[RMDB]
Overview:
The record gives the reactivity of an RNA of 207 nucleotides to 2A3. 2A3 adducts were read by reverse transcription with SuperScript II with manganese.
RNA sequence: GGGAACGACUCGAGUAGAGUCGAAAAAGCAGGCAGUUUAGUAGAAUUUGGAAAUUCACAAUGUAAUUGUUGAAAUGUUUACCAGCAUUGGCCUUCGGUCUGUGCAACAAGCAUUCUCCUCUAGUAUUACUUGUCUAUUACACUGUAUAAUAUAUGACCCCUACGUAGGAUUCGUCCUACGUAGGGGAAAAGAAACAACAACAACAAC
Reactivity to 2A3 in 0.01 (KOAc 150mM, MgCl2 10mM, bicine 150mM(pH8.5), 24C), signal-to-noise 3, nucleotides 027 to 156: a010g120c070a060g040g030c020a020g010u020u010u100a020g000u010a020g030a120a140u110u080u250g090g100a090a110a050u210u160c090a030c070a060a070u150g020u100a020a030u040u040g020u040u020g030a000a040a040u020g010u080u080u060a140c050c030a020g000c010a010u010u020g020g010c000c000u110u150c250g000g000u000c000u040g040u010g050c000a060a030c020a070a020g000c000a010u010u020c050u020c090c020u070c040u080a080g090u060a080u050u020a030c000u020u060g050u050c010u000a020u050u010a020c030a000c020u000g050u050a040u070a220a170u140a070u090a060u230g080a100
The reactions ran in a buffer of 150 mM KOAc, 10 mM MgCl2 and 150 mM bicine (pH 8.5), at 24 C.